[RMDB]
RNA sequence: GGGAACGACUCGAGUAGAGUCGAAAAUCUUCGCCGGGGGCGCUCCGUCUUCGUUCUUCUUCCUUCUCAACAGUCCGACGAUGUUUCCCAGCCAGGGGUUUUCAUCCUCAAGUUUCUUGAUCUUCUUGCAACACAAGGUUCGCCUUGUGUAAAAGAAACAACAACAACAAC
Reactivity to 2A3 in 0.01 (KOAc 150mM, MgCl2 10mM, bicine 150mM(pH8.5), 24C), signal-to-noise 9, nucleotides 027 to 129: u020c010u070u080c030g040c030c010g010g000g000g010g030c030g000c020u020c020c010g050u010c020u050u060c040g060u030u020c010u040u000c000u020u060c010c000u070u060c030u010c020a060a170c030a050g060u040c020c020g020a040c030g010a050u080g040u000u030u020c010c000c000a010g030c020c020a020g010g020g010g000u040u030u060u080c040a050u070c000c010u020c020a030a050g030u010u040u030c010u050u050g070a140u030c020u060u010c010u030u080g030c050a090
Reactivity to DMS in 0.01 (KOAc 150mM, MgCl2 10mM, bicine 150mM(pH8.5), 24C), signal-to-noise 8, nucleotides 027 to 129: u040c000u020u030c060g030c060c010g000g010g000g000g000c100g000c070u000c010c010g040u000c040u030u020c060g000u010u010c040u030u020c030u000u000c030c000u020u030c020u020c040a110a140c200a120g040u010c040c020g000a080c090g000a080u030g000u060u010u020c030c000c020a060g000c100c100a060g000g000g000g000u000u000u000u000c100a140u050c000c030u000c020a090a140g000u030u020u040c050u020u020g030a110u000c100u010u000c010u040u040g030c120a160

Structure probing data (2A3 and DMS) for a 170-nucleotide construct. For 2A3 the reverse transcriptase was SuperScript II with manganese. Conditions: 150 mM KOAc, 10 mM MgCl2 and 150 mM bicine (pH 8.5), 24 C. The 2A3 profile rests on 36,756 reads. For DMS, 51,111 sequencing reads were counted.